[RMDB]
RNA sequence: GGGAACGACUCGAGUAGAGUCGAAAAGGGUUCGACAUCCACCGAUGGUGUCACGCCACUAAUCGGUUCGGUAACGUCUGUGGAUGGAGGUGCUACUUCUACAGAACCUGUAGCCUCAGUUGUCAACGGAGAUACAUCUUCAAUGCGCGGAAAUGUAUCUAUUAAUAGGGUUCGCCCUAUUAAUAGAAAAAGAAACAACAACAACAAC
Reactivity to 2A3 in 0.01 (KOAc 150mM, MgCl2 10mM, bicine 150mM(pH8.5), 24C), signal-to-noise 7, nucleotides 027 to 156: g020g000g000u010u030c020g010a010c010a020u000c010c010a000c000c020g000a010u020g020g050u020g020u050c040a040c110g050c030c000a070c170u250a160a150u190c150g010g000u060u070c080g010g020u010a030a020c000g010u010c020u020g010u010g010g000a010u030g030g020a020g010g030u050g080c010u050a110c020u090u110c010u030a050c040a070g030a050a030c010c020u040g050u060a030g030c010c010u040c040a050g000u060u060g040u070c040a060a030c080g050g020a060g010a030u050a040c020a060u010c090u060u030c050a090a210u130g030c100g000c060g070g040a020a070a030u080g010u050a050
Reactivity to DMS in 0.01 (KOAc 150mM, MgCl2 10mM, bicine 150mM(pH8.5), 24C), signal-to-noise 5, nucleotides 027 to 156: g000g020g040u000u000c060g020a110c030a060u010c020c010a110c010c040g020a030u000g010g000u000g010u000c050a110c140g040c060c010a130c060u010a100a120u000c110g020g030u000u000c100g020g010u000a050a050c020g000u000c010u000g020u000g000g010a040u000g010g010a060g000g020u000g020c020u010a080c060u010u000c040u010a160c040a130g000a030a050c030c020u000g030u000a110g020c050c020u000c040a140g000u000u000g000u000c050a090a130c080g010g000a090g010a150u010a030c030a040u000c020u000u000c010a070a110u000g010c080g000c060g010g010a030a030a050u000g010u000a100